[RMDB]
RNA sequence: GGGAACGACUCGAGUAGAGUCGAAAAUCACGAUCGAACACGUUCUCGUGAGUUCGAGAGUUCUCGAACGUGUUCGAACGAUCGUACGUGUACACACGUGUACACGUGUUCACACUCGUACGUUCGUACUCUCACGAACUCUCGAUCGAGAGAUCUCCUGCUUGCAAUUUUUCGAAAUUGCAAGCAGAAAAGAAACAACAACAACAAC
Reactivity to DMS in 0.01 (KOAc 150mM, MgCl2 10mM, bicine 150mM(pH8.5), 24C), signal-to-noise 1, nucleotides 027 to 156: u030c050a100c060g050a180u000c010g020a060a080c050a100c010g010u000u000c030u000c030g020u000g000a080g030u000u000c040g030a130g000a070g010u010u000c000u010c110g000a040a000c000g030u000g000u000u000c010g040a060a050c020g000a020u000c020g080u010a010c010g000u000g010u010a080c120a000c030a020c060g000u000g060u000a100c110a000c000g010u000g050u010u000c080a220c030a020c020u000c010g040u000a030c000g000u010u000c010g030u000a100c070u000c060u010c060a150c120g040a090a170c000u010c000u000c020g000a100u000c050g030a140g000a110g010a120u000c010u000c060
Reactivity to 2A3 in 0.01 (KOAc 150mM, MgCl2 10mM, bicine 150mM(pH8.5), 24C), signal-to-noise 5, nucleotides 027 to 156: u140c040a030c080g050a060u040c010g010a030a010c020a010c080g030u070u000c100u120c100g160u180g080a050g000u020u030c020g020a000g000a000g040u070u010c110u070c150g000a000a000c000g000u000g040u060u040c010g010a020a000c020g010a010u020c020g010u030a010c020g010u010g020u040a010c000a000c010a000c090g040u050g140u240a060c080a010c150g000u000g020u060u060c060a060c010a020c060u020c030g010u020a000c000g000u000u010c010g000u050a040c030u030c000u020c040a050c140g040a010a010c000u000c000u000c010g030a030u030c040g010a040g010a000g000a090u000c010u030c020
Annotation
This 207-nucleotide RNA was probed chemically with DMS and 2A3. 2A3 adducts were read by reverse transcription with SuperScript II with manganese. For DMS the reverse transcriptase was MarathonRT. For 2A3, 6,164 sequencing reads were counted.